[RMDB]
RNA sequence: GGGAACGACUCGAGUAGAGUCGAAAAUGCAUAAAAUUUUGAACAUGAAAGCUAAUAGGCAUCUUUCUGACGCCCUAGACGCAGGUGAGGGGUUGGACCUGCAUGUUAUCGAAGAUGUAUUAGCAUGGGUUAGGCAUUAAUUCGUUAAUGCCUAACCAAAAGAAACAACAACAACAAC
Reactivity to DMS in 0.01 (KOAc 150mM, MgCl2 10mM, bicine 150mM(pH8.5), 24C), signal-to-noise 4, nucleotides 027 to 126: u000g030c080a100u010a050a060a090a120u000u000u000u000g010a120a130c120a100u010g000a090a110a150g000c010u010a020a020u000a100g020g030c000a010u000c020u000u000u020c090u010g010a070c090g010c080c060c050u010a080g030a050c150g020c020a010g020g000u010g000a110g010g020g010g020u000u000g010g000a040c010c010u010g010c000a060u000g000u000u000a090u000c110g010a020a020g000a030u000g000u010a040u000u000a040g010c020a100u010g010
Reactivity to 2A3 in 0.01 (KOAc 150mM, MgCl2 10mM, bicine 150mM(pH8.5), 24C), signal-to-noise 2, nucleotides 027 to 126: u050g010c030a030u300a120a300a130a300u260u300u160u200g130a130a050c030a070u130g080a070a050a000g000c000u030a000a060u020a070g250g000c000a000u000c020u030u140u050c070u070g010a040c010g090c000c000c040u050a130g020a080c110g040c020a000g000g000u050g020a090g000g060g000g060u070u100g070g020a000c000c010u000g000c010a020u150g050u010u010a150u080c040g010a000a000g010a000u000g010u010a020u000u020a010g010c040a060u070g080